RNA sequence: GGGAACGACUCGAGUAGAGUCGAAAAUCAAGAGACUGCACUCGAACGUGGAGCGCCUGAACACGCGCUGGAGUGCGGUGUGCAACCAAUUGGGUGAAAGAAUGCGCUCAUGCGAGACGGCUAUCGACACCACGGUACGGUUCGCCGUACCGUGGUGAAAAGAAACAACAACAACAAC
Reactivity to DMS in 0.01 (KOAc 150mM, MgCl2 10mM, bicine 150mM(pH8.5), 24C), signal-to-noise 2, nucleotides 027 to 126: u000c080a150a150g020a070g030a080c030u000g000c000a020c000u000c000g000a030a080c040g020u020g030g020a070g010c070g000c050c070u000g010a130a200c130a040c110g000c030g000c030u000g000g000a040g020u000g020c000g000g000u000g000u000g000c100a110a110c040c040a070a200u000u000g010g000g000u000g030a090a140a080g020a070a130u000g000c070g000c010u010c010a080u000g000c260g000a090g010a080c050g020g010c020u010a130u000c050g030a270
Reactivity to 2A3 in 0.01 (KOAc 150mM, MgCl2 10mM, bicine 150mM(pH8.5), 24C), signal-to-noise 1, nucleotides 027 to 126: u130c030a080a020g050a020g020a060c000u000g010c000a010c030u020c050g130a300a140c060g020u050g020g080a080g060c020g050c070c060u020g150a130a030c030a000c100g040c020g010c010u040g020g090a030g000u040g000c010g000g000u000g000u030g000c000a020a110c030c000a060a030u180u080g130g000g000u160g050a040a090a130g160a130a000u120g100c030g000c010u000c030a020u160g010c040g000a010g040a050c050g040g000c030u030a010u160c040g030a000

Overview
The record gives the reactivity of an RNA of 177 nucleotides to DMS and 2A3. For DMS the reverse transcriptase was MarathonRT. The RNA was probed in 150 mM KOAc, 10 mM MgCl2 and 150 mM bicine (pH 8.5) at 24 C. The DMS profile rests on 1,001 reads. For 2A3, 938 sequencing reads were counted.